[RMDB]
RNA sequence: GGGAACGACUCGAGUAGAGUCGAAAAGAUAUGGAAGGCCUUAAGGGAGCGAGAAUGUGACUAUAUCUUCGGAAACGAAGAUACGAAUCACAUCGCUUCGCGAGGAUCUUAAGGCCUUCCUAAGUCACGCCAUUUAUAUGUUCGCAUAUAAAUGGCGAAAAGAAACAACAACAACAAC
Reactivity to DMS in 0.01 (KOAc 150mM, MgCl2 10mM, bicine 150mM(pH8.5), 24C), signal-to-noise 3, nucleotides 027 to 126: g000a040u000a300u020g020g010a010a000g000g020c000c000u000u000a010a000g000g000g010a040g030c010g010a030g010a170a010u010g010u000g010a020c070u000a300u000a000u010c000u000u000c000g010g020a090a050a160c010g000a010a010g020a010u000a010c060g020a070a090u000c000a010c010a000u000c160g010c090u000u000c020g010c020g010a060g020g010a010u000c010u000u000a010a010g020g000c000c000u000u000c000c000u000a010a070g000u010c020a300
Reactivity to 2A3 in 0.01 (KOAc 150mM, MgCl2 10mM, bicine 150mM(pH8.5), 24C), signal-to-noise 3, nucleotides 027 to 126: g010a010u050a040u140g000g020a010a000g020g010c010c010u000u000a020a010g020g020g010a030g000c020g000a030g040a040a040u010g010u010g000a000c040u020a010u010a010u070c000u010u000c010g020g020a030a050a030c010g000a010a000g010a010u010a000c050g080a180a300u010c020a010c000a020u030c130g080c060u110u090c020g000c020g060a300g020g000a010u000c000u030u000a010a010g000g000c000c000u010u000c000c000u010a000a010g010u000c000a010
The data come from the RNA Mapping Database (RMDB), library TTRINS.
Chemical mapping of a 177-nucleotide RNA with DMS and 2A3.
For 2A3 the reverse transcriptase was SuperScript II with manganese.
For DMS, 4,768 sequencing reads were counted.
For DMS the reverse transcriptase was MarathonRT.
The 2A3 profile rests on 9,242 reads.
Values cover nucleotides 27 to 126.